[RMDB]
RNA sequence: GGGAACGACUCGAGUAGAGUCGAAAAGAUAUGGACACAGGGAGGAACUACAGCGACGGAUCGGAAACGAUCCCAAGCUGCCAUCGAUCUGUGUCCUAAGUCAAAGUUUGAGCUUCGGCUCAAACAACUUAGUUAGCUGGUUCGCCAGCUAACUAAGAAAAGAAACAACAACAACAAC
Reactivity to 2A3 in 0.01 (KOAc 150mM, MgCl2 10mM, bicine 150mM(pH8.5), 24C), signal-to-noise 2, nucleotides 027 to 126: g010a010u080a010u120g010g010a010c000a010c000a000g030g010g010a070g020g070a150a090c200u300a100c240a010g000c000g010a020c030g000g000a000u000c000g020g000a040a040a010c030g000a000u000c000c000c000a050a010g020c010u020g020c020c030a290u260c010g020a010u040c000u000g010u010g000u010c000c000u000a010a000g020u000c020a000a000a200g010u030u000u000g000a000g000c000u060u080c300g090g000c010u000c000a010a000a010c000a010a010
Reactivity to DMS in 0.01 (KOAc 150mM, MgCl2 10mM, bicine 150mM(pH8.5), 24C), signal-to-noise 4, nucleotides 027 to 126: g000a020u000a300u020g000g000a010c000a000c000a000g000g000g010a300g020g000a110a060c110u040a130c030a020g010c010g000a300c300g000g010a010u000c000g010g000a050a100a140c000g020a000u000c010c000c000a030a300g010c020u000g000c060c080a090u000c040g030a300u000c000u000g010u000g010u000c000c000u000a000a080g000u000c030a090a060a080g010u000u000u000g000a040g010c000u000u010c200g010g000c010u000c000a000a000a000c000a100a190